[RMDB]
RNA sequence: GGGAACGACUCGAGUAGAGUCGAAAAGGGGGAAACGCGUAAUGACCAUUAAAGCUGGUGACAUUACGUAAGGUAGGUAUCAGUAAAACUUUACUGAUAGAAGGGAUACUAGUGGCAACGGUGCCAUGGGCGAAUUAUAGUUCGCUAUAAUUCGCCCAAAAGAAACAACAACAACAAC
Reactivity to DMS in 0.01 (KOAc 150mM, MgCl2 10mM, bicine 150mM(pH8.5), 24C), signal-to-noise 4, nucleotides 027 to 126: g040g000g020g010g000a110a050a030c150g000c030g000u020a000a000u000g000a090c000c000a010u020u040a070a090a280g040c300u000g000g020u010g000a150c010a020u000u010a000c010g000u000a120a020g000g010u020a070g020g000u000a020u010c020a010g010u000a000a030a150a140c210u030u010u000a020c020u000g000a010u030a000g000a150a070g000g000g030a190u030a040c150u000a050g040u000g000g000c000a050a130c120g020g040u000g000c010c020a030u010
Reactivity to 2A3 in 0.01 (KOAc 150mM, MgCl2 10mM, bicine 150mM(pH8.5), 24C), signal-to-noise 2, nucleotides 027 to 126: g070g050g020g000g050a080a040a020c080g040c000g010u010a000a000u020g050a070c000c020a020u130u200a170a110a040g140c050u020g000g000u010g100a060c000a000u000u010a030c000g000u010a000a010g080g050u080a020g000g080u010a030u020c010a000g000u000a000a040a020a080c090u100u100u000a000c000u010g000a000u000a010g060a060a040g000g000g020a020u070a110c020u080a100g030u000g000g020c040a100a070c080g100g000u040g000c030c000a030u060
Background
Chemical mapping of a 177-nucleotide RNA with DMS and 2A3. Source: RMDB libraries RFM100 and RFMREP, as collected in RNAgym. 2A3 adducts were read by reverse transcription with SuperScript II with manganese. DMS adducts were read by reverse transcription with MarathonRT. Conditions: 150 mM KOAc, 10 mM MgCl2 and 150 mM bicine (pH 8.5), 24 C.